[RMDB]
RNA sequence: GGGAACGACUCGAGUAGAGUCGAAAAAGCAUCCGCGCGCAACCGCCACACCCGUUUCGGGGACCUCGGUACAGGCAGGCUGAGAACUCCCCUCUUUUAUGCCCGGCGGUAGCGCAGCGAUCCGCGCGAUACUCCGCUGAUUCGUCAGCGGAGUAUCAAAAGAAACAACAACAACAAC
Reactivity to DMS in 0.01 (KOAc 150mM, MgCl2 10mM, bicine 150mM(pH8.5), 24C), signal-to-noise 2, nucleotides 027 to 126: a040g010c120a120u000c090c000g040c070g000c010g030c020a130a040c020c000g020c010c000a080c180a100c050c070c000g010u000u030u030c150g000g000g010g000a050c230c000u000c040g020g010u020a040c110a030g030g010c050a040g000g000c000u000g010a080g000a050a100c210u020c000c000c000c000u020c020u000u030u000u010a050u020g020c030c080c110g000g020c010g000g010u010a030g020c000g030c000a010g000c000g000a080u030c040c050g020c140g020c150
Reactivity to 2A3 in 0.01 (KOAc 150mM, MgCl2 10mM, bicine 150mM(pH8.5), 24C), signal-to-noise 6, nucleotides 027 to 126: a000g050c030a030u040c070c030g000c010g000c010g000c030a010a010c000c000g050c030c010a090c010a050c020c040c030g060u080u190u220c090g000g010g000g010a010c000c030u030c020g030g010u120a170c030a040g090g100c040a020g050g000c010u010g000a010g010a050a050c050u040c000c010c070c000u060c030u030u140u030u050a110u150g050c020c050c030g010g000c000g000g010u010a020g010c000g000c070a010g000c000g000a020u040c040c030g070c000g000c050